RNA sequence: GGGAACGACUCGAGUAGAGUCGAAAACUCGAAAGAGACCUGCAUAUCUUAGGCAGAUGAGCAAGUCUCGUCUGAAAAGCGAAAGCCCUAAGAUAUGCAGCUGUGACGACUUGACGCAGAAAAUAAAACUGAUCCACGAGUUCGCUCGUGGAUCAGUAAAAGAAACAACAACAACAAC
Reactivity to 2A3 in 0.01 (KOAc 150mM, MgCl2 10mM, bicine 150mM(pH8.5), 24C), signal-to-noise 1, nucleotides 027 to 126: c000u020c000g070a030a050a100g050a000g030a070c000c000u000g000c000a000u000a000u020c000u000u000a000g000g020c000a000g000a190u000g000a000g020c080a200a050g190u000c000u000c000g000u000c000u000g140a050a050a000a000g000c000g070a060a040a000g000c000c000c000u000a000a000g000a000u050a000u000g000c020a000g000c000u000g000u020g000a040c160g030a030c040u010u180g000a000c050g040c000a050g160a110a070a030a050u300a010a210a020